The record gives the reactivity of an RNA of 207 nucleotides to 2A3 and DMS. In probing experiments dimethyl sulfate is read out at A N1 and C N3, which are open when not base-paired.

RNA sequence: GGGAACGACUCGAGUAGAGUCGAAAAACGGUGCGGAAGUUGGCGCUUCCGUGAAACGCGAAAAUCGGACGGUGGCUGCAAGUCGCAUCGCAAAACCGCGGCAAGUGGAGUUAGCGAGAGGAGGCUGAAACCAUCCAACACUUCGGUGUUGGAUGAAACGCUAAGUAUUCUUCGGAAUACUUAGCGUAAAAGAAACAACAACAACAAC
Reactivity to 2A3 in 0.01 (KOAc 150mM, MgCl2 10mM, bicine 150mM(pH8.5), 24C), signal-to-noise 3, nucleotides 027 to 156: a000c050g020g000u030g000c010g000g030a080a040g070u100u140g090g000c040g000c040u020u020c000c000g000u010g000a080a100a010c100g010c020g080a040a040a010a110u130c020g040g030a010c040g010g040u020g040g000c030u080g010c060a050a030g020u040c030g020c030a040u030c010g000c040a040a060a010a060c070c030g050c020g050g000c090a100a020g060u070g040g020a050g020u070u070a020g020c020g030a050g010a030g070g030a010g030g000c030u030g020a040a020a000c030c000a000u000c000c000a000a000c000a000c000u040u110c200g080g000u000g010u010u000g000g000a000u000g010a010a020
Reactivity to DMS in 0.01 (KOAc 150mM, MgCl2 10mM, bicine 150mM(pH8.5), 24C), signal-to-noise 2, nucleotides 027 to 156: a070c030g010g000u000g010c020g000g010a050a110g020u000u010g000g030c280g010c010u000u000c010c010g020u000g030a060a090a100c050g000c060g000a110a060a120a120u000c040g010g000a040c030g000g020u000g010g040c020u000g000c060a010a140g000u000c040g020c000a120u000c010g040c030a050a030a090a090c030c020g000c060g050g020c120a070a120g030u000g010g000a110g000u000u000a100g040c060g010a060g010a090g030g000a110g040g010c020u030g000a170a080a050c120c010a020u000c000c000a000a000c020a000c010u010u010c280g040g030u020g000u000u000g000g000a020u000g010a010a040
As a SHAPE reagent, 2A3 marks flexible, mostly unpaired nucleotides at the ribose 2'-OH. The DMS profile rests on 3,021 reads. For DMS the reverse transcriptase was MarathonRT. The RNA was probed in 150 mM KOAc, 10 mM MgCl2 and 150 mM bicine (pH 8.5) at 24 C.